[RMDB]
RNA sequence: GGGAACGACUCGAGUAGAGUCGAAAAGAUAUGGAGUCGUCAAGACAUGCGGGUCGGAAACGACCCAAGCAACAGCUUGCCGACUCCUAAGUCAAAACCAGACUCAUCCUUCGGGAUGAGUCUGGAAGACCUAUUUUAUCUUCGGAUAAAAUAGGUCAAAAGAAACAACAACAACAAC
Reactivity to DMS in 0.01 (KOAc 150mM, MgCl2 10mM, bicine 150mM(pH8.5), 24C), signal-to-noise 3, nucleotides 027 to 126: g010a010u000a210u000g000g010a020g010u000c000g000u000c000a010a020g010a260c090a140u000g020c070g000g010g020u000c000g010g000a040a050a120c010g010a010c010c000c010a000a000g020c010a030a130c290a120g000c020u000u000g000c030c000g010a030c000u000c000c000u000a010a040g000u000c050a080a100a110a130c010c000a010g010a000c000u000c000a000u000c010c000u000u010c230g010g020g010a010u000g010a000g000u000c000u000g000g000a030a040
Reactivity to 2A3 in 0.01 (KOAc 150mM, MgCl2 10mM, bicine 150mM(pH8.5), 24C), signal-to-noise 2, nucleotides 027 to 126: g010a000u030a020u070g000g010a000g000u010c010g010u010c010a000a010g050a220c070a060u030g000c000g000g020g000u020c000g000g020a020a030a010c010g000a000c000c050c020a010a030g000c000a010a060c090a080g120c010u000u000g000c000c000g010a000c010u000c000c000u010a000a000g010u000c000a010a000a060a080c000c010a010g000a000c000u000c010a010u000c010c020u070u180c300g120g020g000a000u000g000a010g010u000c000u010g000g000a000a000